[RMDB]
RNA sequence: GGGAACGACUCGAGUAGAGUCGAAAAGAUAUGGAGACAGUGGAGACUAGCACAGCUGCUCGGAAACGAGCAGGUGCAUCGUUGAAACUGUCUCCUAAGUCAAAACUGCUGUCUUCGGACAGCAGAACAUGCGGGGUUAGUUCGCUAACCCCGCAUGAAAAGAAACAACAACAACAAC
Reactivity to DMS in 0.01 (KOAc 150mM, MgCl2 10mM, bicine 150mM(pH8.5), 24C), signal-to-noise 1, nucleotides 027 to 126: g020a040u000a300u000g000g030a070g020a010c010a010g050u020g020g010a300g000a030c020u000a300g030c050a050c000a100g000c000u010g000c020u030c000g000g000a100a060a170c000g000a000g030c000a000g010g010u000g000c020a050u000c180g000u000u000g000a300a100a030c010u000g010u000c020u000c000c000u000a000a030g000u000c050a140a080a110a140c000u000g000c020u030g000u000c000u000u010c250g070g030a010c000a000g000c000a000g000a000a240
Annotation: Structure probing data (DMS) for a 177-nucleotide construct. The DMS profile rests on 746 reads. Conditions: 150 mM KOAc, 10 mM MgCl2 and 150 mM bicine (pH 8.5), 24 C. For DMS the reverse transcriptase was MarathonRT.